Source: RMDB library M2RFPK, as collected in RNAgym. Chemical mapping of a 207-nucleotide RNA with 2A3 and DMS. Values cover nucleotides 27 to 156. The reactions ran in a buffer of 150 mM KOAc, 10 mM MgCl2 and 150 mM bicine (pH 8.5), at 24 C. The 2A3 profile rests on 3,583 reads. For DMS, 2,555 sequencing reads were counted.
RNA sequence: GGGAACGACUCGAGUAGAGUCGAAAAAUCAUCUGAAGAUCAGCGAUUAGAAGAGAAAGAUCAGUUAAGUCCUUUGGACCUGAUCAGCUUGAUACAAGAACUACUGAUUUCAACUUCUUUGGCUUAAAAAAGGCCACAGAGUUCGCUCUGUGGCCAACUGUCUAAAUAUGUUCGCAUAUUUAGACAGAAAAGAAACAACAACAACAAC
Reactivity to 2A3 in 0.01 (KOAc 150mM, MgCl2 10mM, bicine 150mM(pH8.5), 24C), signal-to-noise 5, nucleotides 027 to 156: a000u050c030a020u040c040u110g080a110a040g020a110u060c040a000g030c010g150a150u080u150a060g040a090a000g020a010g050a080a080a000g030a000u020c000a010g020u060u130a130a020g010u030c020c000u070u140u280g030g020a030c020c020u030g020a050u040c020a010g040c010u070u120g010a030u070a150c040a060a050g030a080a030c040u120a020c010u080g010a040u000u060u090c040a060a070c010u020u030c000u040u050u050g060g000c020u050u050a020a030a030a040a060a080g000g000c010c000a000c000a000g030a000g010u040u090c130g040c030u000c000u000g000u000g000g000c000c000a000a000
Reactivity to DMS in 0.01 (KOAc 150mM, MgCl2 10mM, bicine 150mM(pH8.5), 24C), signal-to-noise 2, nucleotides 027 to 156: a060u000c010a100u000c030u000g000a160a150g010a130u000c030a060g010c030g010a200u010u000a050g010a020a070g010a070g000a150a140a050g000a020u000c000a050g000u000u000a090a050g020u000c020c020u000u040u000g000g000a040c050c030u020g040a180u000c110a040g030c100u000u000g010a080u010a080c020a020a040g000a040a020c030u000a060c010u000g020a060u000u000u000c020a110a240c020u010u000c000u000u010u000g000g040c010u000u010a000a030a090a040a070a220g020g000c000c020a020c000a030g010a030g020u000u010c300g010c010u000c030u010g060u000g010g020c020c040a000a010